[RMDB]
RNA sequence: GGGAACGACUCGAGUAGAGUCGAAAACUUGGAGCAGCCACCAUGACGGCGUGCAUGGUUAUUUACGCCUCCGUUGGCGUCACAAGACUAUAUCCGAACGGUAAAAGUCAACCAUCAUCUAAGGGUGGUACCUGCUACACUUCGGUGUAGCAGGUACAAAAGAAACAACAACAACAAC
Reactivity to 2A3 in 0.01 (KOAc 150mM, MgCl2 10mM, bicine 150mM(pH8.5), 24C), signal-to-noise 1, nucleotides 027 to 126: c030u040u080g090g000a090g020c110a010g000c030c010a030c030c130a070u080g110a040c080g030g070c050g000u050g060c020a030u090g000g090u200u080a140u130u200u060a060c000g000c040c030u070c050c060g050u080u070g030g090c000g000u020c000a020c020a200a000g060a030c020u010a010u020a060u130c070c030g110a110a030c110g000g000u070a020a060a000a060g010u020c000a020a000c020c000a000u030c000a000u000c030u080a040a010g120g060g000u020g010
Reactivity to DMS in 0.01 (KOAc 150mM, MgCl2 10mM, bicine 150mM(pH8.5), 24C), signal-to-noise 2, nucleotides 027 to 126: c010u000u000g000g000a070g000c010a090g010c030c060a060c000c040a100u000g000a060c220g020g020c080g030u000g020c100a050u010g010g000u000u000a140u000u000u000a030c020g010c000c000u020c180c230g000u020u000g000g030c000g000u000c150a100c190a100a040g000a070c000u000a020u000a100u000c030c020g020a090a120c300g030g030u010a000a050a160a060g000u000c030a100a030c000c000a010u000c050a030u000c070u010a100a150g000g000g000u000g000
The record gives the reactivity of an RNA of 177 nucleotides to 2A3 and DMS.
DMS adducts were read by reverse transcription with MarathonRT.
Values cover nucleotides 27 to 126.
High DMS reactivity at an A or C suggests that its Watson-Crick edge is free.
For 2A3 the reverse transcriptase was SuperScript II with manganese.
The 2A3 profile rests on 1,044 reads.
Source: RMDB library OK2TST, as collected in RNAgym.
Conditions: 150 mM KOAc, 10 mM MgCl2 and 150 mM bicine (pH 8.5), 24 C.